[RMDB]
RNA sequence: GGGAACGACUCGAGUAGAGUCGAAAAGAUAUGGAAUAGGUGUGAAUACACAGGACUCGAUAAGCGUUAUGUCGGAAACGACAUGCGCUUUUGACGAGUUAGUGUAUUCACACCUAUUCCUAAGUCAGUUUAUGUACAAGUUCGCUUGUACAUAAACAAAAGAAACAACAACAACAAC
Reactivity to DMS in 0.01 (KOAc 150mM, MgCl2 10mM, bicine 150mM(pH8.5), 24C), signal-to-noise 5, nucleotides 027 to 126: g010a040u010a300u010g000g000a010a010u000a000g010g030u000g010u000g000a030a010u000a000c000a000c000a100g010g000a000c000u000c000g030a280u000a010a020g010c000g030u000u010a010u000g010u000c010g000g000a120a110a180c000g000a020c000a000u000g000c010g010c000u000u000u000u000g000a170c130g000a020g010u000u000a060g040u000g010u000a000u000u000c000a000c000a000c000c000u000a000u000u000c000c000u000a010a060g010u000c040a120